[RMDB]
RNA sequence: GGGAACGACUCGAGUAGAGUCGAAAACGAGGCUGCACGCCGAGGACCUGCCCAUUGCUCAGGAGGAAUGGCUGAUGGCGCCCGCCAUUGCCUACGGCGCCAGCGGCGAACACCAGCGUUUCGCUGGGUAUGUUCGCGCGUUCGCGCGCGAACAUACAAAAGAAACAACAACAACAAC
Reactivity to DMS in 0.01 (KOAc 150mM, MgCl2 10mM, bicine 150mM(pH8.5), 24C), signal-to-noise 2, nucleotides 027 to 126: c070g000a190g000g020c040u000g030c100a100c090g000c040c030g010a120g000g030a060c060c050u000g010c030c040c030a100u000u010g020c060u020c070a030g000g010a140g010g010a150a040u010g010g010c030u000g000a050u000g010g000c030g010c090c100c050g000c030c120a070u000u010g010c050c030u010a130c100g010g010c000g000c070c050a020g020c030g000g020c000g000a050a100c110a300c000c010a010g000c000g000u000u020u000c040g010c000u000g010g010
Reactivity to 2A3 in 0.01 (KOAc 150mM, MgCl2 10mM, bicine 150mM(pH8.5), 24C), signal-to-noise 1, nucleotides 027 to 126: c010g030a060g080g000c030u130g050c050a020c120g040c010c030g010a030g020g050a120c000c020u060g020c010c000c010a070u050u110g050c030u030c100a060g120g110a050g010g030a100a090u050g090g000c050u020g040a060u040g010g020c030g000c020c010c000g030c040c010a190u010u190g050c000c000u080a090c020g020g000c000g000c030c030a020g000c000g030g000c000g020a070a030c050a050c010c000a000g010c000g000u040u040u070c050g040c020u010g010g000